[RMDB]
RNA sequence: GGGAACGACUCGAGUAGAGUCGAAAACAGCUUGCGGAUCGCGUAGGUCUCAAUAUGCGUAUCUUCAAUAUCCAGCACGAGGCAGAUAUCGGCGAGCUUCUUUUCGCGGUCGCGGUGGCGAAUGGAACGAUCACGUGACGUUCGCGUCACGUGAUCGAAAAGAAACAACAACAACAAC
Reactivity to 2A3 in 0.01 (KOAc 150mM, MgCl2 10mM, bicine 150mM(pH8.5), 24C), signal-to-noise 1, nucleotides 027 to 126: c030a020g060c010u030u090g020c030g120g010a010u000c020g000c010g050u070a060g000g150u100c050u000c060a010a120u160a050u180g020c040g030u060a060u030c000u090u070c090a000a110u020a000u150c020c040a010g000c050a030c100g050a070g120g000c030a030g040a120u090a060u100c070g040g010c020g050a000g000c000u060u010c010u010u020u070u060c030g010c070g000g020u070c030g000c050g210g060u130g000g010c000g050a050a050u110g020g030a020a030
Reactivity to DMS in 0.01 (KOAc 150mM, MgCl2 10mM, bicine 150mM(pH8.5), 24C), signal-to-noise 1, nucleotides 027 to 126: c140a140g000c040u010u010g000c020g030g000a030u000c040g020c070g030u000a030g000g000u000c060u020c060a220a100u000a040u000g010c050g000u000a010u000c010u000u050c080a090a020u000a110u000c080c070a100g040c040a120c160g040a090g000g000c020a080g000a000u010a060u000c070g000g030c030g010a020g000c050u000u000c020u000u000u010u000c070g030c130g000g000u000c030g030c030g000g000u000g000g060c010g000a030a060u010g000g000a090a140